[RMDB]
RNA sequence: GGGAACGACUCGAGUAGAGUCGAAAAUUAACAUGAUAAACGAACGGGCCUCUAAAGCUGCAUCUCUAGGGACCGAGCUGGAGCUGUUUCGAGUUCUCAGUACUGCUGUUGAACAGGCCGCCAAAGAUGCCUCGGAUUCAGAUCUGACAUCUAUAGACUCACAUACUAGAUUCGUCUAGUAUGUGAGAAAAGAAACAACAACAACAAC
Reactivity to 2A3 in 0.01 (KOAc 150mM, MgCl2 10mM, bicine 150mM(pH8.5), 24C), signal-to-noise 5, nucleotides 027 to 156: u120u070a060a030c050a060u140g020a100u150a130a160a050c060g030a050a020c050g040g030g020c040c000u070c090u140a130a060a020g020c040u050g000c020a030u040c030u000c020u130a080g040g020g000a020c020c070g020a020g000c030u070g070g050a050g050c040u020g080u090u230u070c050g030a050g050u070u010c050u000c000a010g030u060a110c040u090g010c000u010g010u130u020g010a040a000c010a020g000g000c020c020g000c020c010a090a160a010g000a010u020g030c040c060u020c000g020g010a010u130u130c080a080g040a300u020c020u030g010a010c000a010u000c000u050a090u050a150g090a040
Reactivity to DMS in 0.01 (KOAc 150mM, MgCl2 10mM, bicine 150mM(pH8.5), 24C), signal-to-noise 4, nucleotides 027 to 156: u000u000a090a120c090a140u030g000a120u010a050a090a100c070g020a080a090c050g000g050g020c000c000u000c020u010a040a050a040g020c020u000g050c120a090u000c010u000c010u000a070g000g040g000a030c030c010g010a060g010c050u000g000g010a150g020c040u020g010u000u000u000c030g010a150g020u000u000c030u000c020a080g020u000a070c110u000g020c010u000g030u000u000g010a100a110c060a060g020g020c020c020g000c030c040a040a120a100g010a030u000g010c020c030u000c010g020g020a120u000u010c230a200g020a130u000c010u000g020a040c030a010u000c010u010a120u010a110g010a250